[RMDB]
RNA sequence: GGGAACGACUCGAGUAGAGUCGAAAAGUAAAGGCGAGAGAGAAGAUCACAGAAUGCCAAAAGCACGCUUAGAAACGGACAUCUCUGAGCAAAAGUGCACGCAAUAAGCGAAAGAUGCCGAAAAAAACAUGACCAGCAUAUUCGUAUGCUGGUCAUGAAAAGAAACAACAACAACAAC
Reactivity to 2A3 in 0.01 (KOAc 150mM, MgCl2 10mM, bicine 150mM(pH8.5), 24C), signal-to-noise 1, nucleotides 027 to 126: g040u060a130a060a070g040g040c050g000a040g010a000g000a020g050a120a000g020a020u040c020a020c000a080g090a100a040u160g000c020c000a010a140a000a000g030c020a000c070g000c020u000u020a000g090a030a060a000c010g040g070a020c010a010u000c020u070c040u030g000a010g030c000a000a040a110a000g040u050g020c050a010c110g010c020a040a300u120a250a040g000c010g030a020a100a000g020a010u010g030c020c010g130a130a000a000a000a000a060a000
Reactivity to DMS in 0.01 (KOAc 150mM, MgCl2 10mM, bicine 150mM(pH8.5), 24C), signal-to-noise 1, nucleotides 027 to 126: g020u000a040a130a070g020g050c040g000a120g010a130g000a050g030a120a040g010a060u000c090a070c160a050g010a120a030u000g000c040c020a000a090a050a270g000c040a080c100g010c020u000u000a060g000a040a040a070c090g020g000a120c120a060u000c060u000c040u000g000a080g000c060a030a040a130a190g040u000g020c080a050c120g000c000a020a090u000a060a090g000c000g010a040a080a120g020a040u020g000c000c040g000a000a000a030a050a080a030a170

The record gives the reactivity of an RNA of 177 nucleotides to 2A3 and DMS. Values are in units of 0.01, from 0 to 300, in steps of 10. DMS adducts were read by reverse transcription with MarathonRT. The 2A3 profile rests on 1,039 reads. The RNA was probed in 150 mM KOAc, 10 mM MgCl2 and 150 mM bicine (pH 8.5) at 24 C.